[RMDB]
RNA sequence: GGGAACGACUCGAGUAGAGUCGAAAAUCCUAAGUCGGACCGUGCCAGACCCAACACAGCUAGCUUUAUCGGAAACGAUAAAGCUUGGACCUGUGUGGGUCGGUAAUUCGGUCCGAUAUGGAAAAGCGAUGUACAAGGUUCGCCUUGUACAUCGCAACCGUAUGAUAACGUUCGCGUUAUCAUACGGAAAAGAAACAACAACAACAAC
Reactivity to 2A3 in 0.01 (KOAc 150mM, MgCl2 10mM, bicine 150mM(pH8.5), 24C), signal-to-noise 2, nucleotides 027 to 156: u030c010c000u020a080a020g020u000c000g010g000a000c000c030g000u000g010c040c040a180g000a000c000c000c000a210a050c000a010c000a010g030c010u020a000g010c000u020u000u000a000u000c000g080g030a130a040a070c000g000a000u000a000a000a000g000c000u010u050g000g020a040c030c020u000g010u000g000u000g000g000g000u000c000g010g000u000a010a030u090u030c000g000g000u000c000c000g010a010u010a010u020g020g030a060a130a030a050g000c000g000a000u010g000u000a000c000a010a000g030g000u010u070c160g150c020c000u000u010g000u000a000c000a000u000c000g000c000a010a000
Reactivity to DMS in 0.01 (KOAc 150mM, MgCl2 10mM, bicine 150mM(pH8.5), 24C), signal-to-noise 1, nucleotides 027 to 156: u000c000c000u010a050a250g040u000c020g050g010a000c000c000g090u010g000c030c000a120g070a000c010c010c020a070a100c000a020c020a030g010c010u000a010g000c010u000u010u000a000u000c000g050g000a200a150a300c010g000a050u000a000a000a030g010c010u000u000g100g010a120c260c010u000g060u000g130u010g010g070g050u010c000g030g010u010a020a050u010u000c040g060g050u000c000c010g000a060u000a070u000g010g000a040a040a180a070g020c010g020a030u000g000u000a020c000a010a020g010g030u010u000c290g040c010c030u000u000g020u000a000c010a000u000c000g000c010a010a010
The record gives the reactivity of an RNA of 207 nucleotides to 2A3 and DMS. The data come from the RNA Mapping Database (RMDB), library RNAMAK. The 2A3 profile rests on 4,464 reads. Conditions: 150 mM KOAc, 10 mM MgCl2 and 150 mM bicine (pH 8.5), 24 C. For 2A3 the reverse transcriptase was SuperScript II with manganese.